[RMDB]
RNA sequence: GGGAACGACUCGAGUAGAGUCGAAAAUUCCACUGGCUUUUAGAUUUAUAUUCUGGUGGAAGCACUGCUGAAUAUAUGGAAGAUAAGGAAAACGAAAAGGAAGACAAAAUAAAAGGAUCGAAAGGCAAAUUAGCGGUAAUUUCGAUUACCGCUAAUUAAAAGAAACAACAACAACAAC
Reactivity to DMS in 0.01 (KOAc 150mM, MgCl2 10mM, bicine 150mM(pH8.5), 24C), signal-to-noise 4, nucleotides 027 to 126: u010u010c000c010a140c050u000g020g010c120u010u010u000u030a070g000a110u040u030u030a040u010a050u010u000c010u030g000g030u000g010g010a070a100g010c050a060c020u000g000c110u040g010a070a010u020a050u010a020u020g000g000a070a050g000a050u020a040a040g010g000a070a010a050a120c120g010a030a020a030a070g000g010a050a020g000a090c110a030a060a030a050u020a050a030a080a070g010g000a030u000c040g000a020a040a050g000g010c110a070
Reactivity to 2A3 in 0.01 (KOAc 150mM, MgCl2 10mM, bicine 150mM(pH8.5), 24C), signal-to-noise 4, nucleotides 027 to 126: u020u020c000c000a030c050u030g080g040c000u080u080u060u090a040g030a130u100u170u110a140u060a040u080u000c010u020g050g000u000g000g020a040a000g080c050a060c020u090g070c020u000g040a020a010u040a000u030a040u140g070g020a050a020g020a070u070a080a050g050g040a010a040a000a000c040g040a040a070a010a020g030g010a020a010g070a050c020a010a110a040a000u240a060a090a010a020g080g000a000u010c020g040a070a010a000g030g000c020a060